[RMDB]
RNA sequence: GGGAACGACUCGAGUAGAGUCGAAAAUGCAAUUGGGGGGGAUCGAUGCGCUUAUCUUUACCGGCGGCAUUGGUGAAAACUCACGUAGCGCCCGCCAGCAGAUAUGCCGGGAGCUGACAUUCCUGGGCGUAUAACGACCUUUCGAGGUCGUUAUACGAAAAGAAACAACAACAACAAC
Reactivity to DMS in 0.01 (KOAc 150mM, MgCl2 10mM, bicine 150mM(pH8.5), 24C), signal-to-noise 4, nucleotides 027 to 126: u010g010c060a110a120u020u010g020g010g000g010g010g020g000a070u000c050g000a070u000g010c060g010c030u000u010a060u010c070u000u010u010a110c140c120g010g000c050g020g030c020a060u010u000g010g030u000g010a050a060a150a110c180u000c040a050c090g000u010a070g000c060g000c090c010c040g000c060c030a050g010c160a060g000a070u010a060u000g000c050c020g020g000g000a050g010c050u000g010a080c160a210u010u000c020c010u000g000g010g010
Reactivity to 2A3 in 0.01 (KOAc 150mM, MgCl2 10mM, bicine 150mM(pH8.5), 24C), signal-to-noise 1, nucleotides 027 to 126: u110g000c000a010a070u140u140g010g040g000g000g000g000g000a000u030c010g010a010u030g020c030g000c080u030u000a050u060c010u000u150u100a030c020c030g010g000c000g040g000c040a050u010u100g100g020u050g020a030a060a060a100c060u050c010a010c030g090u060a010g050c020g080c100c040c000g020c010c000a020g000c000a000g040a130u070a010u220g070c000c000g010g000g010a020g010c040u060g040a090c030a060u040u030c030c010u040g020g030g080

Source: RMDB library OK2TRN, as collected in RNAgym.
The record gives the reactivity of an RNA of 177 nucleotides to DMS and 2A3.
The 2A3 profile rests on 1,233 reads.
Conditions: 150 mM KOAc, 10 mM MgCl2 and 150 mM bicine (pH 8.5), 24 C.